[RMDB]
RNA sequence: GGGAACGACUCGAGUAGAGUCGAAAACACGAACAUGACUCCCUUCAAUGCAAACUCUCGCCUGUAUGAUCCCGAUUACCGGUAAAGGGCUCCUGGUCAUGAUUCGAACCAGAGCAUAGCUUAGGAGAACACAAGACUAAUUCGUUAGUCUUGUGUUAAAAGAAACAACAACAACAAC
Reactivity to DMS in 0.01 (KOAc 150mM, MgCl2 10mM, bicine 150mM(pH8.5), 24C), signal-to-noise 9, nucleotides 027 to 126: c110a130c090g000a050a070c080a050u010g010a070c050u000c030c020c020u010u000c090a080a090u020g010c100a060a080a110c080u000c020u000c090g000c030c010u010g010u020a040u010g010a100u010c020c000c010g010a140u030u010a080c040c040g000g010u030a060a080a090g010g010g000c080u000c060c020u000g000g000u000c030a040u010g000a130u010u010c060g010a100a090c050c050a100g000a050g010c040a050u010a070g010c030u010u020a070g000g010a110g010
Reactivity to 2A3 in 0.01 (KOAc 150mM, MgCl2 10mM, bicine 150mM(pH8.5), 24C), signal-to-noise 9, nucleotides 027 to 126: c060a010c030g060a060a010c020a060u090g040a040c030u060c010c000c000u050u050c120a140a080u110g080c040a060a050a140c020u020c010u020c050g020c000c000u030g010u050a050u090g060a080u050c000c000c010g020a040u070u080a060c020c020g030g020u110a080a070a040g050g010g000c010u020c010c020u020g010g010u020c020a050u080g160a280u100u080c040g030a030a020c020c010a020g010a010g040c050a090u080a060g010c000u060u070a040g010g060a070g060